[RMDB]
RNA sequence: GGGAACGACUCGAGUAGAGUCGAAAACUUACUCAUUGGCAUGGUAUCAUAAUUCGAUGCAUUAUACGGAUUAAUAAUACAAGACACCAUUAAUGCAGAAAAAAUAUUUAAAAAUACAGCUGUAACAACUAUUUAUAGCAUUCGUGCUAUAAAUAGUAAAAGAAACAACAACAACAAC
Reactivity to DMS in 0.01 (KOAc 150mM, MgCl2 10mM, bicine 150mM(pH8.5), 24C), signal-to-noise 1, nucleotides 027 to 126: c070u000u010a090c090u010c030a100u000u000g010g040c070a110u000g000g000u000a010u000c010a090u010a080a060u010u020c130g000a270u000g000c060a110u000u000a060u000a170c070g000g010a070u010u000a100a050u000a130a050u060a130c240a060a070g010a140c110a070c010c030a030u010u010a030a070u000g000c000a040g020a000a000a120a080a120a120u070a040u000u010u000a030a110a080a110a160u000a100c060a100g030c030u000g000u030a030a170c160a090
Reactivity to 2A3 in 0.01 (KOAc 150mM, MgCl2 10mM, bicine 150mM(pH8.5), 24C), signal-to-noise 1, nucleotides 027 to 126: c000u020u100a010c010u050c040a030u050u090g030g000c040a010u130g080g010u050a000u040c040a040u060a140a030u150u030c070g060a020u040g000c030a020u020u070a030u080a050c060g000g030a000u140u030a060a080u230a190a050u190a060c040a090a120g130a010c060a040c070c000a010u010u030a040a000u050g000c000a000g040a030a210a000a050a010a000u230a050u140u150u200a050a130a000a000a000u080a160c010a010g000c030u150g030u190a080a040c060a050

This 177-nucleotide RNA was probed chemically with DMS and 2A3. It was measured as part of the RMDB library OK2TST. DMS adducts were read by reverse transcription with MarathonRT. Values cover nucleotides 27 to 126. For DMS, 639 sequencing reads were counted.